[RMDB]
RNA sequence: GGGAACGACUCGAGUAGAGUCGAAAAGGCACGCUUGCGUUGGGUUCCCGAGUGGAAAGCCGAGUUCAACACCGCCGGCCAGCUCGUGAAAGCCUACGGCGUGGACAUAGACCCCGCUGACGUGAUCAAUAACGGACAGCUUCGGCUGUCCGUUAUUAAAAGAAACAACAACAACAAC
Reactivity to DMS in 0.01 (KOAc 150mM, MgCl2 10mM, bicine 150mM(pH8.5), 24C), signal-to-noise 1, nucleotides 027 to 126: g000g000c000a000c010g000c010u000u000g120c080g030u010u010g030g010g010u010u010c090c100c020g000a010g050u010g010g000a140a090a210g010c020c000g000a070g040u000u000c180a080a070c230a030c140c030g000c030c000g010g050c030c080a210g010c020u060c010g020u000g010a100a020a120g020c000c000u010a010c000g020g000c010g000u000g020g010a140c060a040u010a100g010a140c060c000c000c080g060c080u000g000a070c050g030u020g000a080u000c160